An RNA of 207 nucleotides, treated with 2A3 and read out base by base. Conditions: 150 mM KOAc, 10 mM MgCl2 and 150 mM bicine (pH 8.5), 24 C. It was measured as part of the RMDB library M2RFPK.
RNA sequence: GGGAACGACUCGAGUAGAGUCGAAAACAGAGCUGAUGGGCCAUGUACCUAUCCAAAAUGCGAUCCCAUCUUGCACACUGUGCUAAUUUGAGAUUCUCAUGCCUCCUACUUGGAGAGAUCUGGACUACUAACUGUAUGACGUUCGCGUCAUACAGAAGCACUCACAGUGCUUCGGCACUGUGAGUGCAAAAGAAACAACAACAACAAC
Reactivity to 2A3 in 0.01 (KOAc 150mM, MgCl2 10mM, bicine 150mM(pH8.5), 24C), signal-to-noise 1, nucleotides 027 to 156: c030a000g040a000g040c000u030g000a030u000g010g000g000c040c010a030u090g000u120a050c010c000u000a110u190c180c040a060a060a000a000u110g050c070g050a300u260c020c000c000a000u000c070u140u280g000c010a070c000a000c130u070g000u070g000c130u130a000a300u130u080u140g080a080g010a010u190u000c010u000c040a090u110g110c030c000u000c000c000u240a300c130u070u150g010g000a000g000a000g050a010u040c000u140g000g000a030c040u080a010c000u080a300a090c040u080g010u000a000u030g000a080c000g000u000u080c170g040c060g000u000c000a000u040a000c000a000g000a000a010